[RMDB]
RNA sequence: GGGAACGACUCGAGUAGAGUCGAAAAGAGGGUUGGUUCGCCAACCCUCCAUUAAAAUCAGCGGUAAAUAAUUAGCAGGCGUUACCGCUCAACGCCUGCAUAGACUCAGUCUGUUCGCAGACUGAAAUGUAAUUCAUUCGUUCGCGAAUGAAUUACAAAAAGAAACAACAACAACAAC
Reactivity to DMS in 0.01 (KOAc 150mM, MgCl2 10mM, bicine 150mM(pH8.5), 24C), signal-to-noise 1, nucleotides 027 to 126: g000a010g010g020g010u010u000g010g030u000u020c170g010c020c000a000a000c000c000c000u020c000c000a020u000u000a040a060a090a090u010c050a010g020c020g070g030u000a060a080a090u010a050a110u010u000a090g030c020a000g000g000c010g000u000u000a070c030c080g000c050u000c060a070a010c000g000c010c000u010g010c010a060u020a040g020a200c200u000c000a020g000u000c000u000g000u010u000c190g050c000a010g010a020c020u010g000a010a060a100
Reactivity to 2A3 in 0.01 (KOAc 150mM, MgCl2 10mM, bicine 150mM(pH8.5), 24C), signal-to-noise 1, nucleotides 027 to 126: g010a020g000g020g010u000u000g030g020u040u130c170g060c080c000a000a000c000c000c010u010c010c020a040u000u050a000a000a000a050u150c030a040g020c000g060g070u060a020a150a170u080a050a210u160u170a070g010c000a010g000g000c000g010u010u020a090c010c040g000c010u000c020a000a000c010g000c000c000u030g000c000a000u040a020g010a000c030u000c030a000g000u000c000u020g020u010u110c210g010c060a000g000a010c020u010g000a030a020a010
The record gives the reactivity of an RNA of 177 nucleotides to DMS and 2A3.
The data come from the RNA Mapping Database (RMDB), library M2PK50.
The DMS profile rests on 964 reads.
For DMS the reverse transcriptase was MarathonRT.
The RNA was probed in 150 mM KOAc, 10 mM MgCl2 and 150 mM bicine (pH 8.5) at 24 C.